[RMDB]
RNA sequence: GGGAACGACUCGAGUAGAGUCGAAAAGAUAUGGAGCGUGAACUACCUCCUCCCGCGACAGGCGUUUGACGUGACUCGGAAACGAGUCACCGAGCCUGUCGCGGGGUGGAGGCACGCUCCUAAGUCACAUAUUAAGCACGUUCGCGUGCUUAAUAUGAAAAGAAACAACAACAACAAC
Reactivity to 2A3 in 0.01 (KOAc 150mM, MgCl2 10mM, bicine 150mM(pH8.5), 24C), signal-to-noise 3, nucleotides 027 to 126: g050a030u100a060u260g000g000a000g020c020g030u020g030a120a110c100u170a110c300c010u010c010c010u020c030c010c000g010c010g030a000c010a000g000g110c110g090u210u300u300g130a110c040g000u000g000a010c000u020c020g030g050a050a150a100c020g010a000g000u000c000a000c010c000g000a010g000c000c000u000g000u000c010g000c000g000g000g000g000u060g000g010a010g000g020c000a000c000g000c000u010c000c000u000a000a010g000u010c000a000
Reactivity to DMS in 0.01 (KOAc 150mM, MgCl2 10mM, bicine 150mM(pH8.5), 24C), signal-to-noise 4, nucleotides 027 to 126: g030a040u010a300u000g000g000a010g020c010g010u020g000a060a040c120u010a300c020c010u000c010c000u000c010c000c010g030c000g000a020c000a010g000g020c010g000u010u010u010g020a180c300g010u000g010a020c000u000c000g000g000a120a140a260c000g000a010g000u010c000a010c000c010g000a100g020c000c000u000g000u000c000g020c000g000g000g000g000u010g010g000a030g000g010c010a000c010g000c000u000c000c000u000a010a060g000u000c040a280